Structure probing data (DMS and 2A3) for a 177-nucleotide construct. The data come from the RNA Mapping Database (RMDB), library OK2TST.
RNA sequence: GGGAACGACUCGAGUAGAGUCGAAAACUGCUGAUGCACCAAUCAUUGCGACUAAAUCUGGGCUAAUUUGUGGAUUGACAGAAACAACCGUUGCAAUCACUUGAAUUUCGUUGAAGAAGCCUUCAGGCUCAGUUACGCGUUUCGACGCGUAACUGAGAAAAGAAACAACAACAACAAC
Reactivity to DMS in 0.01 (KOAc 150mM, MgCl2 10mM, bicine 150mM(pH8.5), 24C), signal-to-noise 2, nucleotides 027 to 126: c090u000g020c030u000g010a040u010g000c030a200c080c070a080a090u000c120a060u000u000g010c040g020a030c080u000a050a110a140u000c040u010g010g000g020c010u000a040a060u000u000u010g010u010g000g010a040u000u020g020a110c030a040g020a040a090a040c190a040a100c220c070g030u010u000g000c040a040a010u000c080a050c070u020u000g000a050a120u000u000u000c090g010u010u010g010a030a080g000a090a060g030c050c040u000u000c060a030g020g010
Reactivity to 2A3 in 0.01 (KOAc 150mM, MgCl2 10mM, bicine 150mM(pH8.5), 24C), signal-to-noise 2, nucleotides 027 to 126: c020u050g010c000u020g060a050u080g030c070a100c070c030a010a050u110c110a140u070u140g000c060g030a040c060u110a100a070a120u020c010u020g000g170g040c050u080a000a170u080u100u080g150u150g150g040a020u000u030g020a010c010a000g010a010a190a000c040a050a080c030c020g030u000u020g000c010a000a020u010c020a050c110u060u070g050a030a070u110u080u010c060g050u110u140g030a070a040g030a030a050g050c010c110u080u080c060a030g030g050
DMS adducts were read by reverse transcription with MarathonRT.